[RMDB]
RNA sequence: GGGAACGACUCGAGUAGAGUCGAAAAACCGUUUCGUCCAGCCGGGGCCGGACGUCGUUUUGGUGUCUGAUUCGGUAACCGAAUCGGGAGCACCAUCUGCGUAGGCUUGUGGUUUAAGGCUUGCGCCGUUGAUAUCCAAGUUCGCUUGGAUAUCAACAAAAGAAACAACAACAACAAC
Reactivity to DMS in 0.01 (KOAc 150mM, MgCl2 10mM, bicine 150mM(pH8.5), 24C), signal-to-noise 3, nucleotides 027 to 126: a090c030c020g000u000u000u000c040g020u000c010c020a080g010c020c040g010g010g040g010c050c030g020g010a030c020g030u010c140g000u000u000u000u000g010g020u000g030u010c010u000g000a020u000u000c000g000g010u020a140a160c160c000g010a010a000u000c010g010g020g000a130g010c000a010c000c000a030u000c170u010g000c010g010u000a020g010g010c010u000u000g010u010g020g010u000u000u000a170a070g000g000c010u000u000g010c050g010c020c300
Reactivity to 2A3 in 0.01 (KOAc 150mM, MgCl2 10mM, bicine 150mM(pH8.5), 24C), signal-to-noise 3, nucleotides 027 to 126: a000c010c000g010u050u070u070c060g000u000c000c020a000g030c040c050g150g020g220g020c030c000g060g050a010c010g020u050c060g000u000u030u130u170g010g000u000g010u000c010u010g010a000u010u000c010g010g110u180a220a260c170c010g000a000a000u000c000g000g010g010a060g050c000a010c000c000a000u010c030u070g000c010g010u000a000g020g010c020u040u060g120u140g130g170u080u080u100a060a020g000g010c010u010u050g000c000g000c000c070